RNA sequence: GGGAACGACUCGAGUAGAGUCGAAAACGGCCUGAGCGCCACCGACUUCCCGAACAUCGCCAUGGCGCACGACACUGCCGAUGGGAAGCUCUAUGUCAUGGAUGCCGACGAGCUGGAGCGCGUCCGCAAUCUUACUAAAUUUCGAUUUAGUAAGAUUAAAAGAAACAACAACAACAAC
Reactivity to 2A3 in 0.01 (KOAc 150mM, MgCl2 10mM, bicine 150mM(pH8.5), 24C), signal-to-noise 9, nucleotides 027 to 126: c020g020g010c010c050u140g110a040g020c070g020c020c010a010c020c010g030a060c030u040u020c010c000c000g010a090a070c060a120u110c060g020c070c020a060u060g020g000c010g030c040a050c050g060a020c020a020c060u100g020c020c010g090a100u100g040g010g030a030a020g010c000u000c010u050a130u120g060u030c030a050u120g040g020a050u080g030c020c010g030a050c010g020a030g040c030u070g060g020a060g030c060g000c010g030u010c000c000g010c030
Reactivity to DMS in 0.01 (KOAc 150mM, MgCl2 10mM, bicine 150mM(pH8.5), 24C), signal-to-noise 9, nucleotides 027 to 126: c100g010g010c040c050u010g010a100g020c040g010c020c030a100c060c040g010a090c120u000u000c010c000c010g010a110a120c150a070u000c060g010c090c060a070u000g010g010c020g010c070a100c110g000a080c090a070c110u000g010c070c020g000a090u010g000g000g000a070a090g000c100u000c030u000a100u010g010u000c040a070u000g010g000a070u000g010c050c040g000a070c050g000a130g010c050u010g010g010a110g010c060g010c060g010u000c010c060g010c150